This 207-nucleotide RNA was probed chemically with DMS and 2A3. For DMS, 5,684 sequencing reads were counted. DMS (dimethyl sulfate) methylates the pairing face of unpaired adenines and cytosines. Conditions: 150 mM KOAc, 10 mM MgCl2 and 150 mM bicine (pH 8.5), 24 C. For 2A3 the reverse transcriptase was SuperScript II with manganese. Source: RMDB library OK3TST, as collected in RNAgym.
[RMDB]
RNA sequence: GGGAACGACUCGAGUAGAGUCGAAAACGGUGCCAUCCGAAACGUACGCCGUACGGAAACCAUCCUUCAUCCUCGGAUGGGAAAGCAUGCGGAAGCUACGUACGGAAACCAUCCUCAGGAUGGGAAAGCAUGCUGGUCAAGCGGAAUCAGCAUGCGAAGGAUAUAUGUGAUUCGUCACAUAUAUCCUAAAAGAAACAACAACAACAAC
Reactivity to DMS in 0.01 (KOAc 150mM, MgCl2 10mM, bicine 150mM(pH8.5), 24C), signal-to-noise 3, nucleotides 027 to 156: c060g020g000u000g030c010c060a080u000c040c030g010a070a080a090c040g000u000a070c190g030c010c000g040u000a020c010g000g010a150a100a150c010c010a030u000c000c000u020u010c080a110u000c200c100u000c100g010g010a040u000g000g020g010a050a080a140g000c070a070u000g020c030g010g040a110a130g010c020u000a030c030g000u000a110c030g020g000a030a100a110c020c020a020u000c010c020u000c200a070g010g010a040u000g000g010g010a060a040a160g000c000a020u000g010c010u000g020g000u010c020a090a200g030c150g010g010a090a050u000c000a020g010c000a020u000g010c000g000a040
Reactivity to 2A3 in 0.01 (KOAc 150mM, MgCl2 10mM, bicine 150mM(pH8.5), 24C), signal-to-noise 7, nucleotides 027 to 156: c050g020g090u120g070c030c020a050u030c000c010g030a120a060a040c040g030u080a020c060g020c020c010g000u020a020c040g040g040a100a060a020c000c000a010u010c000c020u130u170c070a230u160c040c070u110c080g000g000a000u020g020g000g020a070a060a000g060c060a050u190g040c040g080g070a060a020g000c060u050a020c000g000u000a000c000g000g000a030a010a010c040c010a050u060c000c020u140c150a040g000g000a010u010g010g020g010a020a010a020g010c000a000u010g000c000u000g000g000u030c050a110a090g170c080g110g070a080a010u010c000a000g010c000a000u000g000c000g000a020